The record gives the reactivity of an RNA of 177 nucleotides to 2A3 and DMS. Reactivities are given for positions 27 through 126. 2A3 adducts were read by reverse transcription with SuperScript II with manganese. For DMS, 1,754 sequencing reads were counted. The data come from the RNA Mapping Database (RMDB), library OK2TST. Conditions: 150 mM KOAc, 10 mM MgCl2 and 150 mM bicine (pH 8.5), 24 C.
[RMDB]
RNA sequence: GGGAACGACUCGAGUAGAGUCGAAAAUUAUCAAGAGGUAUGAUGGUAACACGCUUGCGUAAUCUUCCUCUUUCUAAUAGCUGAGUGGCCGUCUGAGAAUCUUGAACAACAACAUUGAAUAGCCUACAAGAAGAAAUUGGUUCGCCAAUUUCUUCUUAAAAGAAACAACAACAACAAC
Reactivity to 2A3 in 0.01 (KOAc 150mM, MgCl2 10mM, bicine 150mM(pH8.5), 24C), signal-to-noise 1, nucleotides 027 to 126: u070u020a060u050c020a000a010g010a010g090g000u130a030u050g020a000u010g040g030u090a180a000c010a010c130g020c040u050u090g000c000g090u090a050a020u050c060u040u000c010c000u010c000u050u010u020c010u020a110a100u030a100g000c010u010g080a010g030u020g050g010c010c010g000u000c010u000g070a070g020a080a010u030c010u080u100g030a030a020c000a000a000c010a040a000c000a060u040u050g090a180a040u140a140g050c040c000u070a040c070
Reactivity to DMS in 0.01 (KOAc 150mM, MgCl2 10mM, bicine 150mM(pH8.5), 24C), signal-to-noise 2, nucleotides 027 to 126: u010u010a050u000c020a010a010g020a030g020g030u010a110u010g010a010u000g010g030u000a080a120c060a060c100g000c090u000u010g000c120g020u000a120a060u010c020u010u000c020c010u000c100u000u000u010c040u000a070a050u000a100g010c030u000g010a050g040u010g000g000c020c010g030u000c040u000g000a180g000a110a050u000c010u000u000g010a060a080c090a020a030c070a030a060c050a170u000u010g010a130a100u010a070g010c040c050u000a070c170